[RMDB]
RNA sequence: GGGAACGACUCGAGUAGAGUCGAAAACGGAAAUGCUCAAAAUGUCUUCCAAUAGUUACGAGGUUUCUAUCCCAAUGUCAAAAAAACUCAACGGCAUUCCAGAGACAACCUCUAAGGACCUGCAGACAUCACCAUGUUGAUUCGUCAACAUGGUGAUAAAAGAAACAACAACAACAAC
Reactivity to DMS in 0.01 (KOAc 150mM, MgCl2 10mM, bicine 150mM(pH8.5), 24C), signal-to-noise 3, nucleotides 027 to 126: c250g000g000a030a030a030u010g030c020u000c050a080a180a140a050u000g020u000c060u010u000c070c160a140a090u010a090g010u000u000a060c300g010a010g020g010u000u010u000c000u020a140u010c020c020c010a130a080u020g000u020c060a000a010a030a110a040a080a040c110u030c050a060a110c140g010g010c020a060u000u000c040c040a090g010a120g020a010c200a040a090c140c050u000c010u020a050a140g000g010a070c110c040u000g000c150a090g000a080c170
Reactivity to 2A3 in 0.01 (KOAc 150mM, MgCl2 10mM, bicine 150mM(pH8.5), 24C), signal-to-noise 3, nucleotides 027 to 126: c050g030g040a030a010a040u200g140c020u010c040a060a130a040a100u130g040u050c040u150u080c070c050a080a150u150a090g020u070u060a030c060g000a010g010g020u010u040u050c050u030a050u010c000c010c000a010a020u070g030u080c040a000a030a050a050a050a080a240c130u060c120a070a030c060g000g000c010a010u060u070c050c030a010g000a000g030a120c040a070a070c020c000u000c010u060a060a060g030g020a030c020c020u040g020c040a010g030a110c030

Conditions: 150 mM KOAc, 10 mM MgCl2 and 150 mM bicine (pH 8.5), 24 C.
An RNA of 177 nucleotides, treated with DMS and 2A3 and read out base by base.
In probing experiments dimethyl sulfate is read out at A N1 and C N3, which are open when not base-paired.
For DMS, 1,649 sequencing reads were counted.
For 2A3, 3,015 sequencing reads were counted.